An RNA of 177 nucleotides, treated with 2A3 and DMS and read out base by base. It was measured as part of the RMDB library OK2TRN. The RNA was probed in 150 mM KOAc, 10 mM MgCl2 and 150 mM bicine (pH 8.5) at 24 C. For DMS, 3,910 sequencing reads were counted.

[RMDB]
RNA sequence: GGGAACGACUCGAGUAGAGUCGAAAACUUCGACAUGGCCGGUUUUAUUCGUACAUACCUGUUCAUAAGUAGGGUUAUCAACAUGACCGCCACUAUAACCAGAUACGACUGACUUGAUGCCUGGAUACAUUAUGAAGUCCUUCGGGACUUCAUAAUGAAAAGAAACAACAACAACAAC
Reactivity to 2A3 in 0.01 (KOAc 150mM, MgCl2 10mM, bicine 150mM(pH8.5), 24C), signal-to-noise 3, nucleotides 027 to 126: c010u140u110c030g060a000c010a090u070g020g000c060c040g040g090u000u040u010u130a080u020u130c050g010u020a020c040a100u140a080c000c010u020g040u070u150c080a070u080a270a030g030u030a040g070g040g010u060u060a060u090c060a060a120c030a090u080g010a030c030c000g050c060c020a020c010u060a040u020a070a040c020c030a010g040a090u040a020c050g020a020c030u070g020a010c000u040u110g040a040u100g080c030c010u030g060g000a050u050a120
Reactivity to DMS in 0.01 (KOAc 150mM, MgCl2 10mM, bicine 150mM(pH8.5), 24C), signal-to-noise 4, nucleotides 027 to 126: c070u000u000c060g020a130c140a060u010g000g000c050c040g000g020u000u000u000u010a080u010u000c090g010u000a070c210a080u000a090c120c020u010g000u000u000c110a060u010a060a080g000u000a140g000g000g000u000u000a050u010c120a080a060c200a110u000g010a040c010c020g010c030c040a050c050u000a050u000a050a070c110c070a060g010a110u000a040c070g010a070c070u000g020a060c050u000u000g010a070u010g010c020c010u010g000g020a150u000a090